[RMDB]
RNA sequence: GGGAACGACUCGAGUAGAGUCGAAAAUGGAUCAUCGGUUCACAGACUAGAUGUCGGUGGGUCAUUAUCGAAAAUGGCUUAAGGUAUAGUCGGACCACAUGGGAGACCAUGAUGUGGUGAAUAAGGAGAUACCAUCUCCCCGAGCGCCACGGUGCGCGAGCAUGUGUCGGUUCGCCGACACAUGCUCAAAAGAAACAACAACAACAAC
Reactivity to DMS in 0.01 (KOAc 150mM, MgCl2 10mM, bicine 150mM(pH8.5), 24C), signal-to-noise 1, nucleotides 027 to 156: u020g010g000a080u010c020a080u050c000g080g000u000u000c060a070c040a290g000a140c080u000a100g000a070u000g030u000c010g010g000u000g000g000g020u000c000a040u000u000a120u010c110g010a160a130a040a050u010g010g030c010u000u000a150a080g010g000u000a050u000a060g000u020c020g040g030a290c000c000a040c030a020u000g010g040g050a300g010a260c020c010a050u000g010a090u010g010u010g050g020u010g010a100a140u000a030a060g000g000a100g000a010u000a140c210c040a160u000c050u000c000c000c000c060g000a150g010c070g030c010c030a090c000g050g040u000g020c050g000c150
Reactivity to 2A3 in 0.01 (KOAc 150mM, MgCl2 10mM, bicine 150mM(pH8.5), 24C), signal-to-noise 4, nucleotides 027 to 156: u030g000g010a010u020c050a040u030c080g020g000u030u040c010a020c010a040g020a010c010u050a060g070a260u150g120u120c040g080g140u170g060g000g030u020c010a000u030u080a060u200c130g070a300a140a000a000u020g000g000c000u050u050a080a030g020g000u040a030u040a060g010u010c020g010g050a020c030c010a000c010a010u010g020g030g000a040g030a040c010c000a020u060g050a150u050g060u100g040g020u040g020a000a050u080a090a020g110g010a000g010a000u070a300c020c020a020u010c030u020c040c000c000c010g090a080g000c000g010c020c020a150c160g090g010u160g010c010g000c040